[RMDB]
RNA sequence: GGGAACGACUCGAGUAGAGUCGAAAAUCUUGUGAUAGCUGGGUUUUAUAAGUGCAAUAUUAAAGUAAACCAUGAGUCUUUUAAGCCCAGCAUGUGGAGUUGAGCAUGCUGGGUUAUAACUCAAAGGUCAUGAUUUUGAAUUCGUUCAAAAUCAUGAAAAAGAAACAACAACAACAAC
Reactivity to DMS in 0.01 (KOAc 150mM, MgCl2 10mM, bicine 150mM(pH8.5), 24C), signal-to-noise 7, nucleotides 027 to 126: u010c020u000u010g020u010g010a060u020a060g010c030u000g010g000g010u020u010u010u020a060u000a060a090g010u020g000c070a060a060u020a110u020u020a060a060a130g000u010a070a100a110c030c020a140u000g000a030g010u010c070u000u020u020u010a060a120g000c010c000c000a010g000c000a000u000g010u000g010g020a140g010u010u010g020a300g010c000a010u000g000c000u000g000g000g010u000u000a010u000a050a030c010u010c020a040a090a100g010g010
Reactivity to 2A3 in 0.01 (KOAc 150mM, MgCl2 10mM, bicine 150mM(pH8.5), 24C), signal-to-noise 4, nucleotides 027 to 126: u040c020u020u110g060u090g060a060u060a020g040c030u060g020g020g040u020u040u060u020a170u050a040a050g090u100g050c040a070a120u080a140u240u140a150a070a060g080u100a140a060a010c010c000a040u050g010a000g020u000c030u000u150u030u120a040a020g010c000c010c000a000g000c000a010u000g010u010g060g120a160g100u090u140g080a010g020c000a000u000g000c000u000g000g000g000u010u010a000u000a000a010c000u000c000a050a180a020g020g000

Chemical mapping of a 177-nucleotide RNA with DMS and 2A3. Conditions: 150 mM KOAc, 10 mM MgCl2 and 150 mM bicine (pH 8.5), 24 C.